[RMDB]
RNA sequence: GGGAACGACUCGAGUAGAGUCGAAAAGAAGACUAGUUCGCUAGUCUUCAAAAGAGCUAGCAAUGUUCAGCUAGCAAAGAUCGAAAGAUCAAAUGAACAAUAAAACCAUCGACUUCGGUCGAUGGAAGAUAUUCAAUAAGUUCGCUUAUUGAAUAUCAAAAGAAACAACAACAACAAC
Reactivity to 2A3 in 0.01 (KOAc 150mM, MgCl2 10mM, bicine 150mM(pH8.5), 24C), signal-to-noise 7, nucleotides 027 to 126: g010a000a000g000a000c000u000a000g020u030u050c060g000c070u000a000g000u020c000u010u000c000a000a000a000a000g050a010g010c000u010a000g000c020a090a210u060g020u040u030c010a010g000c010u000a010g000c010a020a090a000g000a000u010c000g030a060a030a020g000a000u010c020a000a000a030u060g010a010a010c020a040a050u120a170a100a010a050c000c000a000u000c000g000a000c000u030u040c230g090g000u000c000g000a000u000g000g000a000a010
Reactivity to DMS in 0.01 (KOAc 150mM, MgCl2 10mM, bicine 150mM(pH8.5), 24C), signal-to-noise 5, nucleotides 027 to 126: g000a010a000g000a020c000u000a010g020u000u010c240g030c010u000a000g010u000c000u000u000c000a030a070a100a140g020a200g000c010u000a000g010c000a080a070u010g000u000u000c000a060g010c000u000a010g010c020a040a050a070g000a000u000c000g000a120a110a120g000a010u000c010a030a040a090u000g000a020a010c010a050a130u010a050a070a100a150c000c000a000u000c000g010a010c000u000u020c160g040g010u000c000g010a010u000g000g000a010a020
This 177-nucleotide RNA was probed chemically with 2A3 and DMS. The 2A3 profile rests on 24,056 reads. The RNA was probed in 150 mM KOAc, 10 mM MgCl2 and 150 mM bicine (pH 8.5) at 24 C. Reactivities are given for positions 27 through 126.